[RMDB]
RNA sequence: GGGAACGACUCGAGUAGAGUCGAAAAGACACUCAGUUCGCUGAGUGUCAAAUAAAAUCAGCGGUUAAAAAGGAGGCGUUAUAACCGCUGAACGCCUCGUUAAAAGAACCAAGUUCGCUUGGUUCAACAAUAUUCGUAUGUUCGCAUACGAAUAUUGAAAAGAAACAACAACAACAAC
Reactivity to DMS in 0.01 (KOAc 150mM, MgCl2 10mM, bicine 150mM(pH8.5), 24C), signal-to-noise 8, nucleotides 027 to 126: g000a010c000a000c000u000c000a010g010u000u010c190g040c000u000g010a020g010u010g010u000c000a010a050a060u000a060a070a110a100u000c020a010g010c000g010g010u000u000a010a050a090a080a090g010g010a050g000g010c030g010u000u000a100u000a030a160c010c000g000c000u000g000a020a030c060g010c010c000u000c130g020u010u010a060a080a100a110g000a010a000c000c000a010a010g000u000u010c220g010c010u000u000g000g000u000u000c000a050a110
Reactivity to 2A3 in 0.01 (KOAc 150mM, MgCl2 10mM, bicine 150mM(pH8.5), 24C), signal-to-noise 6, nucleotides 027 to 126: g000a000c000a000c000u000c000a010g020u040u070c110g030c140u010g000a000g000u000g000u010c000a000a000a000u010a000a010a000a060u040c010a000g000c010g110g070u100u120a060a050a020a040a030g160g030a040g030g040c050g010u020u040a080u030a130a030c010c000g000c000u010g000a000a000c010g010c010c000u050c030g030u050u160a070a080a030a080g000a000a000c000c000a000a010g000u020u070c170g010c080u000u000g000g000u010u000c000a000a000